[RMDB]
RNA sequence: GGGAACGACUCGAGUAGAGUCGAAAAUGGCUUCUCCUGGGCGAUCGCUCGCUGUUUUUGUGGCUGGCUUUCAGCGGACUGGAGGAGCCGGGAGCGGAGGCGGAGGACCGAGCCAAAAACGUCAGCCUAUAGAGGAAGCUGUUCGCAGCUUCCUCAAGUCAAAUGGUCUUUUCGAAGACCAUUUGACAAAAGAAACAACAACAACAAC
Reactivity to 2A3 in 0.01 (KOAc 150mM, MgCl2 10mM, bicine 150mM(pH8.5), 24C), signal-to-noise 2, nucleotides 027 to 156: u140g020g000c000u000u000c000u040c010c010u020g040g000g060c030g080a160u090c090g030c080u090c040g010c030u040g060u030u040u040u100u130g130u080g030g000c000u000g010g010c000u060u040u010c030a020g020c030g030g060a070c060u050g010g000a010g020g000a000g000c020c000g000g020g000a020g010c050g030g050a030g030g030c040g020g040a030g020g010a010c030c050g010a010g020c070c050a020a050a040a000a010c070g040u030c030a020g010c000c010u110a120u140a120g000a000g020g000a000a000g000c000u010g040u050u120c270g000c110a000g010c000u000u000c000c000u010c000a000a000
Source information:
The record gives the reactivity of an RNA of 207 nucleotides to 2A3. The reactions ran in a buffer of 150 mM KOAc, 10 mM MgCl2 and 150 mM bicine (pH 8.5), at 24 C. Reactivities are rounded to 0.1 and cut off at 0 and 3. The data come from the RNA Mapping Database (RMDB), library M2RFPK. For 2A3 the reverse transcriptase was SuperScript II with manganese.